[RMDB]
RNA sequence: GGGAACGACUCGAGUAGAGUCGAAAAGGCAGAUCGUUCGCGAUCUGCCAACGGUGAGGCGUGAGCCUCACCGACGCGUUGCUACGGCAACGCGAAGAUUAGCCGUACGCGGCUAAUCAACCAACAGACUACGGUCUGUUGGAAGAAGGCGGCUACGGCCGCCUUCAACAUUAUGGCUACGGCCAUAAUGAACGUAAUGACGUGAGUCAUUACGAAACUGAUGAUCUUACAGUGGAGGAUGAAGAAGAUGGCCAUCGGAUCCUCAUACUCAGUCAUUCGUGACUGAGAAAAGAAACAACAACAACAAC
Reactivity to 2A3 in 0.01 (KOAc 150mM, MgCl2 10mM, bicine 150mM(pH8.5), 24C), signal-to-noise 4, nucleotides 027 to 266: g000g000c000a000g000a010u000c020g040u120u140c230g010c000g120a000u000c000u000g010c000c000a010a000c010g000g000u010g000a000g000g010c020g020u130g050a030g010c010c000u010c000a000c000c010g000a010c000g000c010g010u000u000g010c010u020a070c300g170g000c000a000a000c000g000c000g000a040a000g000a010u000u000a000g000c000c000g010u020a030c300g030c010g150g000c000u000a000a000u000c000a000a030c000c000a000a000c000a000g000a000c000u030a040c260g080g000u000c000u000g000u000u000g010g000a010a040g000a000a000g000g000c020g000g000c010u050a100c300g160g000c000c000g000c000c000u000u000c000a000a000c000a000u000u000a000u000g010g000c000u030a070c230g130g020c000c000a000u000a000a000u000g020a110a010c020g000u000a000a010u000g000a000c020g090u090g060a040g010u000c000a000u000u000a000c000g010a080a040a010c030u040g040a070u080g040a060u190c060u080u210a090c060a090g090u110g110g000a020g030g020a040u120g050a060a170g020a040a030g050a090u080g080g050c030c010a080u050c030g020g030a020u020c000c010u020c010a010u030a010
Reactivity to DMS in 0.01 (KOAc 150mM, MgCl2 10mM, bicine 150mM(pH8.5), 24C), signal-to-noise 2, nucleotides 027 to 266: g030g010c000a000g000a000u000c000g040u010u030c200g050c000g000a010u000c000u010g030c000c020a020a040c030g000g010u000g000a000g010g000c000g030u010g010a200g010c010c010u010c010a000c010c000g030a070c030g010c000g020u000u000g020c020u000a110c210g070g000c030a000a030c000g010c040g000a100a070g000a010u010u010a010g010c010c010g050u010a090c200g090c000g010g000c000u010a000a000u000c010a140a270c030c000a000a040c000a000g030a000c010u010a150c180g030g010u000c000u000g000u000u000g000g000a150a060g000a000a010g010g000c000g020g000c000u020a140c180g030g030c000c000g030c000c010u000u010c000a100a230c010a000u000u000a000u010g010g000c000u000a070c210g030g020c000c000a010u000a010a000u010g000a110a120c010g010u000a000a000u010g000a010c000g000u050g000a160g010u000c000a000u000u000a000c020g000a010a050a060c100u000g000a120u010g010a150u000c050u010u000a110c120a050g000u000g010g010a040g000g000a040u030g000a170a130g000a100a010g010a070u000g020g020c090c060a070u010c040g000g020a050u000c040c040u000c040a120u010a040